[RMDB]
RNA sequence: GGGAACGACUCGAGUAGAGUCGAAAAGGCAAGUUCGACCAGCGAAGGCGCGAGCUCGGUCAUGUCGCCCAUCUUGCGUCCGGCACCCGUGUGCGGGCGAGCGCAGGAAUCUGAGCCUUCCGUCAGCCGGCCUGAUUACGUUCGCGUAAUCAGGCCGAAAAGAAACAACAACAACAAC
Reactivity to 2A3 in 0.01 (KOAc 150mM, MgCl2 10mM, bicine 150mM(pH8.5), 24C), signal-to-noise 1, nucleotides 027 to 126: g030g040c050a060a110g000u070u100c030g030a020c010c070a020g000c010g090a090a010g020g020c020g020c010g010a000g000c010u040c060g020g010u040c020a050u120g080u030c090g060c020c000c000a050u030c040u020u040g020c000g080u210c020c000g010g080c070a100c020c070c090g250u240g080u060g270c110g040g060g000c090g050a060g030c010g000c000a000g010g060a040a040u060c150u090g030a020g010c030c000u000u000c020c020g040u070c060a010g120c020